Chemical mapping of a 177-nucleotide RNA with DMS and 2A3.
2A3 adducts were read by reverse transcription with SuperScript II with manganese.
[RMDB]
RNA sequence: GGGAACGACUCGAGUAGAGUCGAAAAGAUAUGGAGUUAUUCAGGACAUGAUGAGAUUCGGAAACGAAUUAACAUCAACAGCCUGAUAACUCCUAAGUCAAAAGGUAGAUUACUUCGGUAAUCUACCGAUAGGGGCUUAGUUCGCUAAGCCCCUAUCAAAAGAAACAACAACAACAAC
Reactivity to DMS in 0.01 (KOAc 150mM, MgCl2 10mM, bicine 150mM(pH8.5), 24C), signal-to-noise 3, nucleotides 027 to 126: g020a020u000a080u020g020g010a000g020u000u000a000u010u000c010a010g020g010a020c110a130u010g000a020u000g010a300g020a020u000u000c000g010g000a030a010a060c000g000a000a020u000u010a090a180c030a010u000c000a050a070c150a170g010c010c000u010g010a020u000a010a010c000u000c000c000u000a010a050g010u000c000a090a070a110a180g000g010u000a000g000a030u010u000a000c000u000u010c240g030g010u000a000a010u010c000u000a000c000c000
Reactivity to 2A3 in 0.01 (KOAc 150mM, MgCl2 10mM, bicine 150mM(pH8.5), 24C), signal-to-noise 2, nucleotides 027 to 126: g010a010u010a010u090g000g010a000g020u050u000a070u230u300c030a020g030g000a050c160a300u260g000a010u000g020a040g000a100u000u020c000g000g000a010a000a020c010g020a020a010u050u050a280a080c010a010u000c060a090a220c150a220g010c000c000u030g010a000u000a010a000c000u000c000c000u000a000a010g000u000c020a080a020a120a160g000g000u000a000g010a000u000u010a010c010u050u110c300g030g010u000a010a000u000c010u000a000c000c000